Structure probing data (DMS and 2A3) for a 207-nucleotide construct. Source: RMDB library OK3TST, as collected in RNAgym. For 2A3, 7,321 sequencing reads were counted. Values cover nucleotides 27 to 156. The RNA was probed in 150 mM KOAc, 10 mM MgCl2 and 150 mM bicine (pH 8.5) at 24 C.

RNA sequence: GGGAACGACUCGAGUAGAGUCGAAAACAGGACGUUAGCAUAGGUCCAUUUUACUAUGCAGAUUGCAUCGUCGGAGACGACGUAGAGACCGCAACAGCAGGGUCGAUGACCUGCUGAAUUACACCUCUUAUCAUAGCGAGGGAUCAAGCUAUGUACACAUUAAUCGCAUAUUCGUAUGCGAUUAAUGAAAAGAAACAACAACAACAAC
Reactivity to DMS in 0.01 (KOAc 150mM, MgCl2 10mM, bicine 150mM(pH8.5), 24C), signal-to-noise 4, nucleotides 027 to 156: c050a130g000g000a070c050g040u000u000a170g020c000a030u000a080g010g020u000c030c090a120u010u010u000u000a090c030u010a010u000g010c010a190g010a130u000u000g020c010a120u000c010g010u000c010g010g010a300g010a270c020g020a050c010g030u000a070g000a060g000a060c070c040g010c050a120a170c050a020g000c010a000g020g010g010u010c030g020a170u000g010a140c000c010u010g000c000u000g000a060a050u000u000a100c100a100c010c010u010c010u000u010a150u010c020a040u000a050g010c040g000a150g020g000g000a090u000c050a070a180g010c020u000a020u000g010u000a090c070a150
Reactivity to 2A3 in 0.01 (KOAc 150mM, MgCl2 10mM, bicine 150mM(pH8.5), 24C), signal-to-noise 7, nucleotides 027 to 156: c020a010g030g030a010c040g040u100u140a030g010c020a020u010a030g030g030u020c000c010a010u030u040u030u040a070c020u010a010u010g010c010a020g090a260u090u160g030c030a050u040c030g000u000c000g040g010a060g000a050c010g000a000c000g010u040a030g030a010g020a070c070c050g010c030a060a080c000a050g000c000a010g030g000g090u130c150g100a110u220g050a040c000c000u000g000c000u000g000a010a020u090u050a050c050a070c030c020u070c010u100u110a080u150c010a000u010a010g010c010g020a040g030g060g010a040u100c050a070a000g000c000u010a000u020g060u090a030c060a000